[RMDB]
RNA sequence: GGGAACGACUCGAGUAGAGUCGAAAAUGGCGGGGAGAAGAAGUUGCUGUUAAGAUAUUCUCCUCUAGAGAAGAACGUUCGUGGUUCCGUGAGGCAGAGAUUUAUCAAACUGUAAUGUUACGUCAUGCGGAAGACAUGUAUUCGUACAUGUCUUCCGAAAAGAAACAACAACAACAAC
Reactivity to DMS in 0.01 (KOAc 150mM, MgCl2 10mM, bicine 150mM(pH8.5), 24C), signal-to-noise 4, nucleotides 027 to 126: u020g010g010c030g010g010g010g020a080g020a040a110g010a090a100g050u000u020g010c050u020g010u010u020a060a110g010a040u010a070u050u010c030u000c010c020u000c050u010a080g010a080g010a100a030g030a060a070c070g000u020u010c110g030u010g000g010u000u000c010c040g000u000g010a040g020g020c300a040g010a090g010a110u010u020u010a010u010c050a070a050a070c040u010g010u040a070a050u020g010u000u000a100c100g000u000c070a050u010g010
Reactivity to 2A3 in 0.01 (KOAc 150mM, MgCl2 10mM, bicine 150mM(pH8.5), 24C), signal-to-noise 5, nucleotides 027 to 126: u090g050g000c050g020g030g030g010a110g030a130a030g060a100a030g060u030u040g040c040u020g030u070u080a050a030g010a020u020a080u120u000c010u020c030c000u000c010u000a080g080a000g030a100a010g030a030a000c040g050u140u130c110g050u190g100g040u010u000c020c010g020u080g020a020g010g040c100a000g020a010g000a090u100u070u050a100u080c080a060a020a030c010u000g050u070a020a070u090g030u150u100a020c040g020u020c010a020u140g050